[RMDB]
RNA sequence: GGGAACGACUCGAGUAGAGUCGAAAAUGCGAGAGCCCACGGCGUCGAGGUCCGGCCGGUCUGCAUCAAUCGGUCCCGAUGGGACUGCACGCUUGAACGCAUCGGCAAUACCGAUCGGCAUGCGGUGGCGAGGCACUCACUUCGGUGAGUGCCUCGCAAAAGAAACAACAACAACAAC
Reactivity to 2A3 in 0.01 (KOAc 150mM, MgCl2 10mM, bicine 150mM(pH8.5), 24C), signal-to-noise 1, nucleotides 027 to 126: u100g000c050g010a080g060a020g000c000c000c000a000c030g000g020c000g020u020c060g000a000g020g020u050c070c010g000g000c000c010g000g000u050c000u040g080c000a080u050c070a080a080u110c030g000g000u000c000c010c010g070a300u280g020g000g020a020c000u040g000c100a160c150g150c000u000u300g050a100a070c100g000c000a000u000c020g000g000c040a050a050u030a090c000c000g030a090u030c000g010g040c050a140u140g090c040g180g000u120g030

Annotation:
The data come from the RNA Mapping Database (RMDB), library OK1LIB. An RNA of 177 nucleotides, treated with 2A3 and read out base by base. Values cover nucleotides 27 to 126.